[RMDB]
RNA sequence: GGGAACGACUCGAGUAGAGUCGAAAACAUCUAUUCGUAGAUGCGAGACGGGGUCGAGGGAGUCAUGACAUCGAUCUAUACUGAAGCCUCCACGGUAUAGGGAGUACCAUGACAUCGAUCUCGACGGAGGCACCCUACCCUUGCUAUUCGUAGCAAAAACUUUCUACACUUUCGAGUGUAGAAAGUUAAAAGAAACAACAACAACAAC
Reactivity to 2A3 in 0.01 (KOAc 150mM, MgCl2 10mM, bicine 150mM(pH8.5), 24C), signal-to-noise 6, nucleotides 027 to 156: c000a020u000c000u030a050u060u130c240g110u100a010g010a020u020g030c070g050a090g030a060c090g020g020g000g020u020c020g010a020g040g150g050a110g010u020c000a010u020g050a130c060a220u170c080g000a000u000c000u010a000u000a010c000u020g070a120a030g020c000c000u000c010c010a030c010g000g010u010a010u010a000g010g010g000a030g020u040a180c170c040a010u000g000a010c010a140u050c030g070a150u050c010u000c010g000a020c030g000g000a000g000g010c000a040c010c000c010u090a110c020c010c000u020u030g000c010u040a070u130u090c230g180u080a010g000c010a000a010a110
Reactivity to DMS in 0.01 (KOAc 150mM, MgCl2 10mM, bicine 150mM(pH8.5), 24C), signal-to-noise 2, nucleotides 027 to 156: c010a010u000c020u010a030u020u000c220g050u010a000g000a040u000g030c010g000a140g010a220c090g020g020g050g010u010c030g040a130g030g000g020a190g030u010c010a020u020g010a130c060a090u010c070g010a300u000c000u000a040u000a040c010u020g000a070a100g020c000c010u000c010c020a300c000g020g000u000a020u010a020g010g000g020a300g040u000a050c060c000a040u010g030a060c020a210u000c030g000a110u000c000u010c000g010a040c060g010g040a090g030g020c030a150c040c020c050u000a120c010c020c020u010u000g000c000u000a200u010u010c060g000u000a100g030c100a040a060a040